[RMDB]
The record gives the reactivity of an RNA of 207 nucleotides to DMS and 2A3.
RNA sequence: GGGAACGACUCGAGUAGAGUCGAAAAGCGUACUACUAAGGGCGUACAGAGGUGGGAGCAACAUCCCAAAUAGGAUGUUUCCCUCCCACUCCCCACCUGUACGAACUACCCUUAGUAUCGCAAAAGAUCUAUGUUCACUUCGGUGAACAUAGAUCAAGUUAGACUAACUCUUCGGAGUUAGUCUAACAAAAGAAACAACAACAACAAC
Reactivity to DMS in 0.01 (KOAc 150mM, MgCl2 10mM, bicine 150mM(pH8.5), 24C), signal-to-noise 2, nucleotides 027 to 156: g010c040g010u000a080c100u000a010c020u000a010a020g000g020g010c000g030u010a020c030a010g000a190g040g050u010g000g000g010a050g030c070a020a030c010a000u000c000c010c010a040a090a130u010a060g020g010a020u000g010u000u000u000c120c110c000u010c020c000c030a070c010u010c090c040c010c050a300c140c020u020g020u000a040c010g000a070a170c040u010a180c000c010c010u010u000a030g020u000a000u000c020g020c020a110a060a160a130g000a000u000c000u000a010u000g000u000u000c000a000c000u000u010c300g030g000u000g020a020a010c000a000u000a000g000a000u000c000a010a070
Reactivity to 2A3 in 0.01 (KOAc 150mM, MgCl2 10mM, bicine 150mM(pH8.5), 24C), signal-to-noise 6, nucleotides 027 to 156: g010c010g040u110a100c040u010a000c000u000a040a000g010g010g010c010g000u000a000c000a000g010a000g010g030u010g000g000g000a000g000c020a010a000c000a000u020c020c040c070a150a270a100u300a080g000g000a000u010g020u010u020u040c040c000c000u010c000c000c000a010c010u020c010c010c000c000a020c000c000u000g000u000a000c010g010a070a020c050u210a100c060c000c000u000u000a000g010u010a000u100c000g000c010a040a050a020a080g010a000u000c000u000a000u000g010u000u000c000a000c010u030u110c300g130g000u000g000a000a000c000a000u000a000g000a000u000c000a000a000

2A3 adducts were read by reverse transcription with SuperScript II with manganese. DMS adducts were read by reverse transcription with MarathonRT. For 2A3, 10,364 sequencing reads were counted. It was measured as part of the RMDB library RNAMAK.